[RMDB]
RNA sequence: GGGAACGACUCGAGUAGAGUCGAAAAUUUAUGAUGAAGGUAUGGCUGUUGAGAUUAUUUGGUCGGGAUUGUAGUUUGAAGAUGUGCUCUUUUGAGCAGUCUCAACUUUGCUCGUUCCCGUUAUGGGAUAUGAGAACGUUUUCGAACGUUCUCAUAUAAAAGAAACAACAACAACAAC
Reactivity to 2A3 in 0.01 (KOAc 150mM, MgCl2 10mM, bicine 150mM(pH8.5), 24C), signal-to-noise 6, nucleotides 027 to 126: u050u050u030a150u110g090a040u040g060a070a040g040g010u090a030u110g070g000c040u040g010u100u090g030a050g010a090u040u090a060u100u120u100g050g010u040c030g010g010g010a040u030u120g040u100a050g040u020u020u160g100a140a080g000a050u150g050u020g300c000u020c000u080u260u160u300g010a000g000c000a000g010u020c000u000c010a020a000c030u070u020u050g010c010u020c020g000u000u020c000c000c000g000u030u050a150u130g040g040g020
Reactivity to DMS in 0.01 (KOAc 150mM, MgCl2 10mM, bicine 150mM(pH8.5), 24C), signal-to-noise 6, nucleotides 027 to 126: u010u020u020a050u020g000a080u010g000a110a070g010g010u000a050u000g010g010c030u000g010u010u000g000a100g000a070u010u010a070u000u010u000g000g010u000c030g010g010g000a100u020u020g010u010a030g010u010u010u020g010a070a070g010a030u000g010u010g010c010u000c010u000u030u010u020g010a020g000c010a140g000u000c000u000c010a020a020c040u000u010u010g020c160u000c020g000u000u000c000c000c000g010u020u010a050u020g010g010g010